[RMDB]
RNA sequence: GGGAACGACUCGAGUAGAGUCGAAAAGCCUGUAUGCCGCCCCGGAUGAUUUCGCUGGUAUAGGCCGCGGUAUUGAGGGCCAGAGCGAGGAUCGCACAAAACCACGGUUCGCGGAACGACGACCACACCGUAUCAUACUGUUCGCAGUAUGAUACGGAAAAGAAACAACAACAACAAC
Reactivity to 2A3 in 0.01 (KOAc 150mM, MgCl2 10mM, bicine 150mM(pH8.5), 24C), signal-to-noise 9, nucleotides 027 to 126: g040c000c000u030g050u050a090u160g040c010c010g040c000c010c000c000g030g060a100u080g030a040u100u060u070c040g000c050u070g030g090u150a120u090a210g080g000c000c010g140c040g030g060u160a140u090u190g100a170g000g040g000c000c010a030g010a010g070c010g010a030g040g040a070u050c020g000c070a050c040a070a090a050a030c030c020a040c040g060g000u100u080c030g010c010g030g040a060a040c050g070a010c030g020a020c010c030a040c010a020
Reactivity to DMS in 0.01 (KOAc 150mM, MgCl2 10mM, bicine 150mM(pH8.5), 24C), signal-to-noise 5, nucleotides 027 to 126: g000c030c010u010g000u010a070u020g010c030c020g000c030c060c000c010g020g000a080u000g000a040u010u000u010c040g000c010u020g020g020u040a070u020a140g020g020c020c000g010c060g020g030u040a060u020u030g010a140g010g010g000c010c030a170g000a040g020c010g010a060g000g020a060u010c000g000c110a120c160a060a080a070a130c090c070a110c040g000g010u000u000c140g010c040g000g010a060a050c060g000a080c100g030a110c030c030a060c210a210

This 177-nucleotide RNA was probed chemically with 2A3 and DMS. The RNA was probed in 150 mM KOAc, 10 mM MgCl2 and 150 mM bicine (pH 8.5) at 24 C. 2A3 adducts were read by reverse transcription with SuperScript II with manganese. Reactivities are given for positions 27 through 126.